Chemical mapping of a 177-nucleotide RNA with DMS. For DMS, 778 sequencing reads were counted. The reactions ran in a buffer of 150 mM KOAc, 10 mM MgCl2 and 150 mM bicine (pH 8.5), at 24 C.
RNA sequence: GGGAACGACUCGAGUAGAGUCGAAAAAGUCGGAAAGACUCCGCAUCCUCCGGCUGACCCUCCUUCAGCUCGCCGCUAGUCGAGCGGACAACUGAGUGAGUAGCCCCAACCCUAAUCUGUUUUUAUCAGACGUUAUGUAGUUCGCUACAUAACGUCUAAAAGAAACAACAACAACAAC
Reactivity to DMS in 0.01 (KOAc 150mM, MgCl2 10mM, bicine 150mM(pH8.5), 24C), signal-to-noise 1, nucleotides 027 to 126: a010g020u010c000g020g000a020a110a230g020a010c050u000c120c190g020c070a170u010c040c030u000c010c020g030g000c010u000g010a140c110c060c020u010c040c000u020u000c020a010g020c030u000c230g020c000c020g000c050u000a180g010u010c300g000a100g030c000g000g020a050c040a070a040c040u000g020a010g010u000g010a000g010u000a130g000c020c000c000c050a050a100c020c000c020u030a100a080u030c130u030g030u000u020u000u000u000a080u020c130